RNA sequence: GGGAACGACUCGAGUAGAGUCGAAAAAAAAAGAUAUGGAGACCAGAACUACGCUAUGGAGCGUGAUGACCUUAAUCGGAAACGAUUAAGCAAGCGCUCGCAUAGCGCUGGUCUCCUAAGUCAAAAAGCUUAUUAUCUUGUUCGCAAGAUAAUAAGCAAAAGAAACAACAACAACAAC
Reactivity to DMS in 0.01 (KOAc 150mM, MgCl2 10mM, bicine 150mM(pH8.5), 24C), signal-to-noise 3, nucleotides 027 to 126: a090a070a100a060a080g020a020u000a300u010g000g000a020g010a010c000c000a020g010a110a060c200u020a300c050g020c000u000a010u000g000g000a000g000c010g030u000g000a070u030g020a140c300c000u000u000a000a000u000c000g020g000a080a090a100c000g000a020u000u000a000a010g050c020a050a170g010c010g010c000u000c000g010c030a010u010a000g020c010g000c010u000g000g000u000c000u000c000c000u000a010a060g010u000c030a070a070a050a120a150
Reactivity to 2A3 in 0.01 (KOAc 150mM, MgCl2 10mM, bicine 150mM(pH8.5), 24C), signal-to-noise 1, nucleotides 027 to 126: a020a000a050a090a020g110a080u180a070u220g000g010a000g010a010c000c000a060g000a110a070c300u300a020c300g020c000u000a000u000g010g000a040g000c000g020u020g080a190u170g030a000c000c070u000u000a000a000u000c020g040g000a000a060a060c000g000a040u000u000a000a040g000c040a300a000g030c010g010c010u000c000g150c010a020u010a000g030c000g070c000u000g010g000u020c000u000c000c010u000a000a000g000u040c030a300a000a000a250a000
Annotation:
Conditions: 150 mM KOAc, 10 mM MgCl2 and 150 mM bicine (pH 8.5), 24 C. The record gives the reactivity of an RNA of 177 nucleotides to DMS and 2A3. The 2A3 profile rests on 1,494 reads. DMS adducts were read by reverse transcription with MarathonRT.